An RNA of 177 nucleotides, treated with DMS and 2A3 and read out base by base. For DMS the reverse transcriptase was MarathonRT. High 2A3 reactivity points to a flexible backbone, as in loops and unpaired stretches. Reactivities are given for positions 27 through 126. It was measured as part of the RMDB library RFMREP.

RNA sequence: GGGAACGACUCGAGUAGAGUCGAAAAGUGUGCGGAUAGCUUGCUAUGCGUGUGUGGUUGUGUGUGGAUUGAUGUGGGUUUUAACUUGUUGCCGUUCGGGACGUUGACGAAAUGGAGCGAUUUGACCGUUUAGUAAAUGGUUCGCCAUUUACUAAACAAAAGAAACAACAACAACAAC
Reactivity to DMS in 0.01 (KOAc 150mM, MgCl2 10mM, bicine 150mM(pH8.5), 24C), signal-to-noise 5, nucleotides 027 to 126: g030u000g010u000g020c060g010g010a060u000a060g010c040u000u010g020c040u000a060u000g010c070g030u010g010u000g020u000g000g010u000u000g020u000g010u020g020u000g000g000a120u010u000g000a080u010g020u000g000g010g010u010u000u010u010a060a110c110u000u010g010u000u000g010c050c040g020u000u000c060g000g010g000a090c070g000u000u000g000a060c080g010a040a080a090u010g010g000a110g010c060g000a100u000u000u010g010a130c160c110
Reactivity to 2A3 in 0.01 (KOAc 150mM, MgCl2 10mM, bicine 150mM(pH8.5), 24C), signal-to-noise 3, nucleotides 027 to 126: g030u030g020u030g020c020g020g030a060u030a090g030c020u030u080g010c020u090a060u110g060c030g010u080g030u030g040u050g040g060u060u120g040u010g030u040g010u030g040g080a120u040u100g030a050u100g030u070g000g040g030u000u030u010u090a050a040c020u050u050g040u070u060g010c010c030g010u040u050c030g000g010g040a050c030g020u050u080g020a030c020g030a040a040a060u100g020g000a050g000c020g040a050u070u020u100g060a060c050c000